[RMDB]
RNA sequence: GGGAACGACUCGAGUAGAGUCGAAAAGCGUACUACUUCGAGGAUAGCUGCCUCGAUAAGUAUUUCCCAAAUAGGAAAUACUUUUGACGAGGCACUAUCUACCCACCGAAGUAUCGCAAAACCUGAUUCGAAGCGGUUCGCCGCUUCGAAUCAGGAACAAAGCUCUUGAGUUCGCUCAAGAGCUUUGAAAAGAAACAACAACAACAAC
Reactivity to 2A3 in 0.01 (KOAc 150mM, MgCl2 10mM, bicine 150mM(pH8.5), 24C), signal-to-noise 1, nucleotides 027 to 156: g060c050g030u100a070c020u010a000c000u030u000c010g020a020g020g000a000u020a010g080c260u000g000c020c050u020c000g050a040u020a010a000g000u000a000u010u020u090c050c090c020a290a300a070u300a080g000g000a000a000a020u020a000c000u040u040u150u210g160a080c020g000a000g000g000c000a000c000u000a000u010c000u000a000c020c020c020a060c040c000g000a010a000g000u030a050u300c000g030c000a070a070a000a070c020c000u000g000a000u000u010c000g010a000a000g020c050g110g040u120u180c240g040c210c000g000c110u000u020c000g000a000a000u000c000a000g020g000a010a000